[RMDB]
RNA sequence: GGGAACGACUCGAGUAGAGUCGAAAAUGGUUCGGAUACGUACAUGAUAAACAUUUAUCACUGGGCGUGUCCGCCUAAACGGCCGGGGCCACUCUAUAGCACGCGCUCCCCGCUGGGGCGAUGGGCCACAUCCGUCGCUGUUCGCGGCGAUGGAUGUAAAAGAAACAACAACAACAAC
Reactivity to 2A3 in 0.01 (KOAc 150mM, MgCl2 10mM, bicine 150mM(pH8.5), 24C), signal-to-noise 9, nucleotides 027 to 126: u110g010g010u140u230c040g010g000a000u000a000c000g010u010a010c000a010u010g010a000u010a010a080a020c090a110u050u040u010a000u000c000a010c090u030g000g030g000c000g000u000g000u000c000c000g000c000c000u020a030a020a000c020g000g000c010c010g010g000g020g000c000c000a040c010u030c010u040a090u070a060g030c030a010c040g020c000g000c000u020c000c010c000c010g040c060u090g000g000g010g000c020g080a100u060g020g020g000c000c000
Reactivity to DMS in 0.01 (KOAc 150mM, MgCl2 10mM, bicine 150mM(pH8.5), 24C), signal-to-noise 9, nucleotides 027 to 126: u020g010g010u020u030c040g000g000a010u000a000c000g010u010a030c010a030u000g000a010u000a000a030a220c270a140u040u010u000a000u000c000a000c200u020g000g000g010c000g000u000g000u000c000c000g000c240c000u000a030a080a120c110g000g010c050c030g000g000g000g000c040c040a070c070u010c080u020a100u020a070g010c070a090c090g010c040g000c040u000c020c010c050c100g000c090u020g000g010g000g010c040g000a060u020g010g010g000c020c080